Structure probing data (DMS and 2A3) for a 177-nucleotide construct. The RNA was probed in 150 mM KOAc, 10 mM MgCl2 and 150 mM bicine (pH 8.5) at 24 C.
RNA sequence: GGGAACGACUCGAGUAGAGUCGAAAAGCCACUGACUACGGUCAGUGGCAAUAAAUCACAGUAAACCGCCAAAAGAGAAAAUCUCAACUGUGAAAAGGCGGAACAGGCUAGGUACGCCUAGCCUGAACCCUCAGUGGUGAUUCGUCACCACUGAGGGAAAAGAAACAACAACAACAAC
Reactivity to DMS in 0.01 (KOAc 150mM, MgCl2 10mM, bicine 150mM(pH8.5), 24C), signal-to-noise 1, nucleotides 027 to 126: g030c000c000a010c000u000g000a000c010u000a090c270g010g000u000c000a000g040u050g000g000c000a010a020u000a110a060a090u060c000a140c000a000g100u000a030a130a140c030c000g000c070c100a030a050a050a130g000a000g000a120a020a210a210u010c000u050c050a100a010c020u000g000u060g000a060a080a110a090g000g000c100g000g050a300a230c020a000g000g000c000u000a000g000g000u090a000c300g000c010c000u000a040g000c000c000u000g000a050a040
Reactivity to 2A3 in 0.01 (KOAc 150mM, MgCl2 10mM, bicine 150mM(pH8.5), 24C), signal-to-noise 2, nucleotides 027 to 126: g010c000c000a010c000u020g000a000c000u050a030c160g070g000u010c000a000g010u000g000g020c000a000a000u000a000a020a000u070c000a000c010a000g090u190a130a130a240c000c000g010c010c010a000a010a130a000g030a000g020a050a220a200a250u070c000u000c030a100a090c020u000g050u000g060a020a160a050a000g000g000c010g000g010a030a030c000a000g000g000c000u020a000g000g020u050a020c270g090c020c000u000a000g000c000c000u000g000a000a000
Source: RMDB library OK1LIB, as collected in RNAgym.